Chemical mapping of a 177-nucleotide RNA with 2A3 and DMS. It was measured as part of the RMDB library OK2TRN. The DMS profile rests on 1,088 reads. The 2A3 profile rests on 1,185 reads. The reactions ran in a buffer of 150 mM KOAc, 10 mM MgCl2 and 150 mM bicine (pH 8.5), at 24 C.

[RMDB]
RNA sequence: GGGAACGACUCGAGUAGAGUCGAAAAGUCUCUGGCCAGUGAGGAUUCCACACAGCUGGGCAGUCUGAGCUUGGCCGCACCCUCUGCAGCCCUGCUGGCAUCUCAGGAGAUGGGCCCGAGAGAGGGACGAUGCCUUCGUUUUCGAACGAAGGCAUCGAAAAGAAACAACAACAACAAC
Reactivity to 2A3 in 0.01 (KOAc 150mM, MgCl2 10mM, bicine 150mM(pH8.5), 24C), signal-to-noise 1, nucleotides 027 to 126: g040u010c010u000c060u100g010g000c000c000a010g020u010g040a030g010g040a060u080u070c020c000a080c010a060c080a100g080c180u030g040g000g000c030a000g040u010c010u020g010a010g010c030u190u300g000g000c000c020g030c040a090c010c030c000u000c000u060g050c040a040g000c050c010c030u070g090c010u030g070g000c050a290u010c130u050c090a040g050g010a130g070a130u110g000g000g030c000c000c060g090a120g000a000g000a000g000g010g010a000
Reactivity to DMS in 0.01 (KOAc 150mM, MgCl2 10mM, bicine 150mM(pH8.5), 24C), signal-to-noise 2, nucleotides 027 to 126: g040u000c020u000c020u000g000g020c000c000a040g040u010g000a300g020g000a050u000u000c020c010a040c040a100c200a130g000c170u010g020g010g010c070a070g000u020c050u000g000a300g000c000u000u000g050g000c010c020g010c160a090c020c010c000u000c010u020g010c090a170g000c030c020c040u000g000c060u000g000g020c130a090u000c050u000c060a060g030g020a150g020a080u000g010g000g010c040c020c100g020a120g000a040g000a020g000g020g000a180